[RMDB]
The record gives the reactivity of an RNA of 207 nucleotides to DMS and 2A3. For 2A3, 3,916 sequencing reads were counted.

RNA sequence: GGGAACGACUCGAGUAGAGUCGAAAACGAGAAUCACUUGCACCAGGUGGCGCAGGUUGCAGUGAGCCAAGAUGGUGCCACUGCUCUCCAGCCUGGGUAACAGAGCGAGAGUCUGUCUCAAAAAACAAAAAGGCCAGGCACGGUGGCUCAUGCCUGAAUUAAUCAUUUAUUUCGAUAAAUGAUUAAUAAAAGAAACAACAACAACAAC
Reactivity to DMS in 0.01 (KOAc 150mM, MgCl2 10mM, bicine 150mM(pH8.5), 24C), signal-to-noise 3, nucleotides 027 to 156: c050g010a160g020a140a080u010c000a030c010u000u000g040c010a040c000c000a180g030g040u000g020g030c030g000c050a030g010g020u020u010g030c040a080g000u010g000a300g000c000c020a090a170g020a180u010g020g020u000g000c030c010a070c010u010g020c010u000c000u010c030c030a230g000c010c010u000g000g010g040u000a060a110c040a040g000a120g030c020g000a080g000a100g010u000c030u000g010u000c010u020c010a000a030a060a070a100a150c040a090a070a040a090a080g010g000c050c030a030g020g010c020a050c040g000g010u000g020g020c020u000c030a050u000g000c020c010u020g010a160
Reactivity to 2A3 in 0.01 (KOAc 150mM, MgCl2 10mM, bicine 150mM(pH8.5), 24C), signal-to-noise 5, nucleotides 027 to 156: c040g000a010g040a050a090u070c010a020c060u030u070g020c040a070c040c000a030g090g000u050g050g030c140g030c150a070g030g040u170u110g010c010a010g010u000g040a060g010c000c010a090a060g160a160u210g060g090u150g030c040c000a010c010u020g000c000u010c000u000c030c010a050g020c020c000u010g030g010g010u060a050a020c030a040g040a010g050c040g020a030g010a010g090u060c060u130g080u000c020u040c080a080a130a020a040a030a050c120a020a130a050a020a010g060g020c050c020a000g000g020c010a000c040g040g040u050g020g000c000u030c040a020u040g010c000c000u000g000a020